[RMDB]
RNA sequence: GGGAACGACUCGAGUAGAGUCGAAAACUGGAUUCUUUCGAGAAUCCAGCAUGUCUAGUCGCUAGCGAACGAUCAACGCUAGCGUCUAGACUUUAUUGAUCGCAUUUGCCUCUUUCGAGAGGCAAAACUUAUUCCUGAGGUUCGCCUCAGGAAUAAGAAAAGAAACAACAACAACAAC
Reactivity to DMS in 0.01 (KOAc 150mM, MgCl2 10mM, bicine 150mM(pH8.5), 24C), signal-to-noise 4, nucleotides 027 to 126: c000u000g000g000a000u000u000c000u000u000u000c160g000a030g010a020a010u000c000c000a000g010c130a070u000g010u000c000u010a010g000u000c000g030c000u000a010g010c000g000a080a070c180g010a100u010c120a150a070c000g010c000u000a000g000c000g010u010c000u000a000g000a010c000u000u000u010a060u010u000g000a110u010c100g020c250a200u000u000u000g010c000c000u000c000u000u000u010c200g010a020g000a000g000g010c000a000a000a020a100
Chemical mapping of a 177-nucleotide RNA with DMS.